[RMDB]
RNA sequence: GGGAACGACUCGAGUAGAGUCGAAAAUAGAUUGUGGUCAGAGGCUGUUACAAGAUCUUAUAUAUUCUAUGAUGGGCCAUAUGCAUCUAAAGCAUGGUGGUUCAGUUUAUGAAUAUAUAAAAGGACAUUCGUACCUCAUUUUCGAAUGAGGUACGAAAAAAGAAACAACAACAACAAC
Reactivity to 2A3 in 0.01 (KOAc 150mM, MgCl2 10mM, bicine 150mM(pH8.5), 24C), signal-to-noise 2, nucleotides 027 to 126: u080a000g100a060u050u130g070u070g020g010u010c030a000g020a010g020g070c070u020g070u040u090a040c000a020a010g000a110u010c010u000u000a000u000a000u000a010u020u010c040u020a010u040g040a090u000g020g020g000c020c010a000u010a000u030g020c000a010u060c160u300a090a020a000g020c000a000u020g090g000u000g000g000u000u000c000a000g000u000u070u000a130u110g000a000a000u010a000u000a000u000a000a010a000a000g090g000a020c070a080
Reactivity to DMS in 0.01 (KOAc 150mM, MgCl2 10mM, bicine 150mM(pH8.5), 24C), signal-to-noise 3, nucleotides 027 to 126: u010a040g000a080u000u010g000u000g020g000u010c030a070g000a080g000g000c060u000g010u020u030a090c080a080a130g000a110u010c040u010u000a030u000a000u000a000u000u000c000u010a140u010g010a020u000g000g000g010c010c000a000u010a010u000g000c000a070u020c300u060a100a110a120g000c000a000u000g010g060u000g000g000u000u010c010a000g010u020u000u000a030u010g000a020a000u000a000u000a000u000a000a030a090a110g000g010a080c160a160